[RMDB]
RNA sequence: GGGAACGACUCGAGUAGAGUCGAAAAUCACGAUCUCGAGAGUUCGAACUCGAUCACGUGAACUCGUUCACGUUCGAACUCGUGAUCGAGAUCUCACUCUCUCACGUACGUUCGAACGAACGAACACACGUUCACGAACGUGAGAUCUCGUGAGUUCGAUUGCGGGACGAUUCGUCGUCCCGCAAUCAAAAGAAACAACAACAACAAC
Reactivity to 2A3 in 0.01 (KOAc 150mM, MgCl2 10mM, bicine 150mM(pH8.5), 24C), signal-to-noise 3, nucleotides 027 to 156: u040c010a020c000g010a000u020c010u020c010g070a050g000a020g080u080u050c080g030a170a080c040u050c070g040a140u120c030a030c010g020u040g090a130a110c100u030c070g030u120u100c090a090c240g110u100u040c010g010a070a070c030u020c030g010u000g000a030u010c000g000a030g000a020u020c020u000c040a000c000u000c000u000c010u020c000a020c080g110u150a010c010g000u040u090c040g010a030a030c020g000a010a000c050g090a170a040c150a020c030a040c120g010u010u010c010a010c040g010a030a000c000g010u000g000a010g000a050u080c060u070c080g020u010g010a060g000u120u130c080
This 207-nucleotide RNA was probed chemically with 2A3. Reactivities are rounded to 0.1 and cut off at 0 and 3. The reactions ran in a buffer of 150 mM KOAc, 10 mM MgCl2 and 150 mM bicine (pH 8.5), at 24 C. Values cover nucleotides 27 to 156.